Structure probing data (DMS and 2A3) for a 207-nucleotide construct. For 2A3, 713 sequencing reads were counted.
RNA sequence: GGGAACGACUCGAGUAGAGUCGAAAAAUGAUAUACUUCGGUAUAUCAUAGAUGGAUGGCCGGCAUGGUCCCAGCCUCCUCGCUGGCGCCGGCUGGGCAACACCAUUGCACUCCGGUGGUGAAUGGGACUCACGAAUGCCCUCUUCGGAGGGCAUAAGAUGACAUACUGGUUCGCCAGUAUGUCAUCAAAAGAAACAACAACAACAAC
Reactivity to DMS in 0.01 (KOAc 150mM, MgCl2 10mM, bicine 150mM(pH8.5), 24C), signal-to-noise 1, nucleotides 027 to 156: a050u000g000a020u000a000u010a030c010u000u000c300g070g010u000a000u010a000u000c000a020u000a040g000a110u000g010g000a190u020g020g070c010c030g010g010c030a140u000g040g000u000c140c020c000a070g010c010c040u000c090c090u000c130g000c020u010g020g000c070g000c020c010g010g040c000u000g010g010g000c030a100a190c030a060c030c010a130u000u000g020c040a100c130u000c120c070g010g010u010g020g040u000g020a070a130u000g000g020g000a100c010u000c050a070c060g020a100a040u000g000c010c000c000u000c000u000u010c220g030g010a010g020g080g000c000a000u000a000a120
Reactivity to 2A3 in 0.01 (KOAc 150mM, MgCl2 10mM, bicine 150mM(pH8.5), 24C), signal-to-noise 1, nucleotides 027 to 156: a010u000g000a000u000a010u000a000c000u040u030c190g110g000u020a000u000a000u000c000a000u010a010g120a030u160g100g020a020u040g070g000c010c010g000g050c110a130u190g050g000u080c000c050c000a000g000c020c000u080c000c000u060c100g020c030u010g000g000c000g000c030c000g000g000c030u000g000g010g030c040a110a020c020a020c020c010a030u110u040g090c110a070c090u070c060c050g050g030u040g000g010u020g060a070a050u090g030g050g050a030c010u060c100a050c090g040a050a000u010g010c000c000c000u000c000u000u010c070g030g000a010g010g000g000c010a000u000a010a000
Source: RMDB library PDB130, as collected in RNAgym. Reactivities are rounded to 0.1 and cut off at 0 and 3. 2A3 adducts were read by reverse transcription with SuperScript II with manganese.